Structure probing data (DMS and 2A3) for a 177-nucleotide construct. Conditions: 150 mM KOAc, 10 mM MgCl2 and 150 mM bicine (pH 8.5), 24 C. DMS adducts were read by reverse transcription with MarathonRT. For 2A3 the reverse transcriptase was SuperScript II with manganese.

[RMDB]
RNA sequence: GGGAACGACUCGAGUAGAGUCGAAAAGCGUACCACCAGCCAUUUGAGCCUGCGAAGUUCGAGGAAGAGUCUUUCCCUGCUGCUGAUAAGACCAAUACACUAGCCCCGAGCAAUCGAACUGCGAUGGUGUAGGGAUAGGGUUCGCCCUAUCCCUACAAAAAGAAACAACAACAACAAC
Reactivity to DMS in 0.01 (KOAc 150mM, MgCl2 10mM, bicine 150mM(pH8.5), 24C), signal-to-noise 2, nucleotides 027 to 126: g000c140g020u000a100c060c040a050c080c040a090g020c000c050a110u000u000u000g000a090g000c040c060u020g020c010g010a040a080g000u000u010c040g000a060g010g020a110a170g000a040g030u000c000u000u000u000c030c010c010u010g030c010u000g010c060u000g010a050u010a060a070g000a070c030c060a040a120u010a100c130a060c070u000a080g010c030c030c010c080g000a110g010c110a030a110u000c050g010a060a060c060u000g000c030g010a130u000g010g010
Reactivity to 2A3 in 0.01 (KOAc 150mM, MgCl2 10mM, bicine 150mM(pH8.5), 24C), signal-to-noise 1, nucleotides 027 to 126: g000c040g040u030a000c020c020a000c020c040a020g080c020c010a020u000u080u200g040a020g040c030c010u090g040c070g040a070a010g100u010u040c030g030a000g090g080a070a150g010a020g040u030c000u000u060u010c010c000c000u000g020c020u000g000c000u020g020a060u010a120a070g020a000c000c050a050a040u030a030c060a040c090u040a040g110c000c000c000c030g030a090g020c080a010a120u130c020g020a070a030c010u030g000c030g110a090u150g000g050